[RMDB]
The record gives the reactivity of an RNA of 207 nucleotides to DMS and 2A3.
The data come from the RNA Mapping Database (RMDB), library ARCHII.
The reactions ran in a buffer of 150 mM KOAc, 10 mM MgCl2 and 150 mM bicine (pH 8.5), at 24 C.
For DMS the reverse transcriptase was MarathonRT.
The DMS profile rests on 1,592 reads.
RNA sequence: GGGAACGACUCGAGUAGAGUCGAAAAUGGAUGCCGCCAUGCCAGAAGCAGUGCUGUGUAGGCAGCGCCUGUGGUGGCUUAAAUGGGUGAACGGGCCAGGGCGGUAACGCAGCAACCAUAAGCCCAGUGGCACGCAGUCUGCAGUCCCGUGCGUAGCCUGUCAUAGCUUGUUCGCAAGCUAUGACAGAAAAGAAACAACAACAACAAC
Reactivity to DMS in 0.01 (KOAc 150mM, MgCl2 10mM, bicine 150mM(pH8.5), 24C), signal-to-noise 1, nucleotides 027 to 156: u010g300g000a110u000g010c000c060g050c010c000a030u010g000c000c040a130g030a300a300g000c030a030g010u000g030c000u010g010u000g020u000a180g030g010c000a090g020c030g000c010c080u000g040u000g020g020u000g010g010c000u000u000a000a100a160u000g050g040g000u000g030a080a080c100g000g000g010c020c060a190g010g000g020c010g000g000u030a080a100c010g050c000a060g010c030a180a030c020c000a070u000a180a280g010c030c000c000a170g000u000g020g020c000a070c050g020c000a130g010u000c010u020g000c030a140g000u010c020c000c000g000u000g000c030g010u000a280g000c090
Reactivity to 2A3 in 0.01 (KOAc 150mM, MgCl2 10mM, bicine 150mM(pH8.5), 24C), signal-to-noise 1, nucleotides 027 to 156: u200g000g020a000u010g000c000c040g000c020c030a060u040g000c030c010a050g030a090a010g050c010a010g010u000g050c010u010g000u020g100u230a120g170g150c000a010g000c000g030c030c070u030g040u070g010g120u000g010g010c000u010u060a020a010a000u020g000g010g020u010g040a090a030c090g000g000g050c020c010a010g000g000g000c010g000g020u020a060a000c000g000c000a000g000c010a030a040c000c000a000u000a020a010g010c000c000c000a000g000u000g000g000c040a000c070g010c010a020g230u020c030u090g050c010a040g060u030c010c000c010g030u100g020c020g100u090a080g050c050